Overview: The data come from the RNA Mapping Database (RMDB), library OK2TRN. Chemical mapping of a 177-nucleotide RNA with 2A3 and DMS. For 2A3 the reverse transcriptase was SuperScript II with manganese. The DMS profile rests on 1,423 reads. Conditions: 150 mM KOAc, 10 mM MgCl2 and 150 mM bicine (pH 8.5), 24 C.
RNA sequence: GGGAACGACUCGAGUAGAGUCGAAAACGCACGAAUGACCAUUGUAAAAUAGUGACAGGGCCUGUCAGCAUUCCUUUCAUUACCUUGUUAGUGAGGCUUUGAGCAUAUUGUGACCAACGUACAGUCAAUACCGCUUGUGUUUCGACACAAGCGGUAUAAAAGAAACAACAACAACAAC
Reactivity to 2A3 in 0.01 (KOAc 150mM, MgCl2 10mM, bicine 150mM(pH8.5), 24C), signal-to-noise 1, nucleotides 027 to 126: c040g000c000a020c050g040a100a090u080g030a040c030c010a030u000u120g040u090a040a110a100a110u070a060g070u090g070a010c010a040g040g040g000c030c030u040g050u070c020a000g000c010a020u070u030c010c020u000u120u000c020a010u000u050a050c000c010u050u100g030u100u090a140g020u030g110a020g010g000c000u010u030u010g030a030g000c070a050u080a140u120u120g020u070g010a020c010c010a000a040c010g020u030a020c020a010g060u020c050a020
Reactivity to DMS in 0.01 (KOAc 150mM, MgCl2 10mM, bicine 150mM(pH8.5), 24C), signal-to-noise 2, nucleotides 027 to 126: c120g030c060a050c050g000a060a090u000g010a060c010c070a060u040u000g010u010a050a050a120a060u010a070g030u000g000a040c080a100g010g010g030c090c040u000g020u010c100a100g010c030a140u000u000c030c010u000u000u010c040a070u000u000a060c070c090u000u000g010u000u000a050g030u000g000a060g000g010c070u000u000u000g010a040g020c080a050u000a090u010u000g000u000g010a130c030c060a050a090c140g000u000a090c110a030g000u020c170a140